RNA sequence: GGGAACGACUCGAGUAGAGUCGAAAAUACUCACAUUUCGAUGUGAGUAACUGUCUAGUGGCUAGCGCCGAUCAAGCGCUAGCGACUAGACUUUAUUGAUCGCCAGCUAACCUUUCGAGGUUAGCAAGACCGUAUACAACUUCGGUUGUAUACGGUCAAAAGAAACAACAACAACAAC
Reactivity to 2A3 in 0.01 (KOAc 150mM, MgCl2 10mM, bicine 150mM(pH8.5), 24C), signal-to-noise 4, nucleotides 027 to 126: u050a000c010u010c010a010c000a020u030u090u110c240g150a010u000g000u000g000a000g010u000a000a060c020u000g010u000c000u000a010g010u010g200g000c000u000a010g020c010g000c040c000g190a280u200c090a070a020g020c000g000c000u000a000g000c000g000a000c000u000a000g000a010c000u000u020u000a030u000u050g070a040u080c060g080c170c030a010g000c000u000a000a000c000c000u040u100u160c280g110a020g000g000u000u000a000g000c000a000a000
Reactivity to DMS in 0.01 (KOAc 150mM, MgCl2 10mM, bicine 150mM(pH8.5), 24C), signal-to-noise 3, nucleotides 027 to 126: u000a010c000u010c010a010c000a010u000u010u000c170g010a020u000g010u000g000a020g010u000a020a050c070u000g000u000c000u000a000g010u000g010g000c000u010a010g000c010g030c000c020g010a180u010c300a120a110g010c010g000c000u000a010g010c000g010a000c000u000a000g000a010c000u000u000u000a050u010u000g010a110u010c110g000c070c040a150g000c000u000a000a010c000c000u000u000u010c120g010a030g020g010u000u000a000g000c010a020a050